[RMDB]
An RNA of 177 nucleotides, treated with DMS and 2A3 and read out base by base.
RNA sequence: GGGAACGACUCGAGUAGAGUCGAAAAUCCAGGAUACUGUCCAGAGAAGUCACACAAACUUAGACAUUUCUUCUUCUGAUGUCCACUUGCCAUGACUGUGUGAGGAAGGGAGAGGUCUCUGAAGUGGAACCAUCGCCAUAUUCGUAUGGCGAUGGUUAAAAGAAACAACAACAACAAC
Reactivity to DMS in 0.01 (KOAc 150mM, MgCl2 10mM, bicine 150mM(pH8.5), 24C), signal-to-noise 3, nucleotides 027 to 126: u050c020c010a200g000g020a080u020a070c040u000g030u000c040c040a080g010a100g000a100a100g010u000c030a060c040a070c070a060a090a130c050u000u010a060g020a030c030a050u000u030u010c010u000u020c010u020u000c030u000g000a110u020g000u010c040c070a060c060u000u000g020c120c060a120u030g000a080c060u010g000u020g040u000g010a090g000g000a050a030g000g000g000a010g000a040g010g000u000c000u000c030u020g000a170a140g010u010g040g000
Reactivity to 2A3 in 0.01 (KOAc 150mM, MgCl2 10mM, bicine 150mM(pH8.5), 24C), signal-to-noise 3, nucleotides 027 to 126: u050c010c010a020g050g010a030u120a140c050u090g060u070c020c010a010g040a000g020a200a010g080u010c050a040c000a010c010a080a290a030c080u070u070a000g010a010c010a060u070u080u010c020u060u010c000u080u030c020u100g060a050u090g070u030c020c000a040c020u030u060g020c080c000a100u100g040a190c070u030g030u010g020u030g180a030g020g080a000a050g040g020g000a060g010a050g030g030u010c020u000c000u040g020a090a030g020u050g030g060